Structure probing data (2A3 and DMS) for a 207-nucleotide construct. The reactions ran in a buffer of 150 mM KOAc, 10 mM MgCl2 and 150 mM bicine (pH 8.5), at 24 C. Reactivities are given for positions 27 through 156. For DMS the reverse transcriptase was MarathonRT.
[RMDB]
RNA sequence: GGGAACGACUCGAGUAGAGUCGAAAAACUAAGUGUUAGGGAAAAGGUGAUGGAGAAAAGGUGAUCAGGACCGGGCACUGUGGCUCACGCCUGUAAUCCCAGUACUUUGGAAGGCUGAGGCAGGAGAAUCACUUGAGGCCAGGAGUUUGAGACCAGCACAUACUUGACGAUUCGUCGUCAAGUAUGUAAAAGAAACAACAACAACAAC
Reactivity to 2A3 in 0.01 (KOAc 150mM, MgCl2 10mM, bicine 150mM(pH8.5), 24C), signal-to-noise 2, nucleotides 027 to 156: a000c090u150a120a070g040u020g040u100u090a090g000g040g000a030a160a040a020g030g020u040g030a110u070g080g020a030g050a040a100a010a050g050g000u050g020a050u170c060a050g050g040a030c040c050g000g020g010c050a020c060u080g030u080g150g000c020u010c040a030c130g020c010c000u020g030u040a060a090u080c020c000c010a010g040u050a080c050u070u070u020g020g030a050a020g010g000c070u080g000a020g020g010c030a010g000g030a040g040a050a020u060c000a010c040u050u050g070a050g040g010c030c020a030g010g000a030g020u000u110u200g030a020g020a030c040c030a030g030c030
Reactivity to DMS in 0.01 (KOAc 150mM, MgCl2 10mM, bicine 150mM(pH8.5), 24C), signal-to-noise 2, nucleotides 027 to 156: a080c050u020a050a160g020u000g000u000u010a080g000g000g000a030a040a050a090g030g020u020g000a140u000g020g020a060g000a010a040a100a110g010g060u000g000a120u010c050a140g000g020a110c040c070g040g030g020c040a080c050u000g040u010g020g000c030u000c030a060c110g000c040c010u000g020u000a080a090u000c030c010c010a080g000u000a060c030u010u000u040g050g020a100a070g010g030c040u010g020a060g020g000c020a020g000g030a040g010a050a060u000c010a030c060u010u000g030a120g000g030c030c010a070g000g010a060g000u000u000u000g020a100g000a090c020c010a080g030c110